[RMDB]
RNA sequence: GGGAACGACUCGAGUAGAGUCGAAAAAAGGUGAUGCUGCGUGUCGAGGUGCCGUUGGCCUCGUGAACAAACGGCAAAGCCAUUAACUGGCAACCAGAACUACGCUCUCGCUGCUUAAGUGAGACAGUGACCGCCGAGCCCGGCCUUUGGCGCGGCGCAGCUUAUAGAUCUUCGGAUCUAUAAGCUGAAAAGAAACAACAACAACAAC
Reactivity to 2A3 in 0.01 (KOAc 150mM, MgCl2 10mM, bicine 150mM(pH8.5), 24C), signal-to-noise 4, nucleotides 027 to 156: a000a000g160g010u130g010a100u130g000c030u030g010c010g000u060g080u120c010g020a020g020g020u120g060c050c020g050u100u130g030g000c030c000u010c010g050u040g070a090a030c080a090a070a040c040g020g000c050a070a040a010g000c000c010a020u130u170a150a080c140u030g000g000c010a030a090c020c010a040g020a140a020c060u130a050c110g030c040u020c000u010c010g000c020u070g020c050u260u190a060a000g020u020g050a000g010a020c050a040g000u030g040a110c010c040g000c020c000g020a000g010c020c010c000g010g020c010c000u010u020u050g010g000c010g000c010g020g000c010g000
Reactivity to DMS in 0.01 (KOAc 150mM, MgCl2 10mM, bicine 150mM(pH8.5), 24C), signal-to-noise 3, nucleotides 027 to 156: a080a070g010g020u000g010a130u000g010c040u000g010c020g020u020g070u010c030g010a110g020g030u000g020c000c020g030u010u000g000g020c030c020u000c040g020u020g010a120a110c050a040a060a100c050g000g000c010a020a090a210g020c000c000a050u000u010a120a140c150u000g020g050c010a090a090c040c050a130g010a100a120c070u010a100c060g000c080u000c020u000c040g020c010u000g030c120u000u010a070a110g030u000g010a120g000a050c040a040g070u010g010a070c050c030g020c010c000g000a150g000c040c030c060g000g000c020c030u000u000u000g010g010c000g040c050g040g020c010g010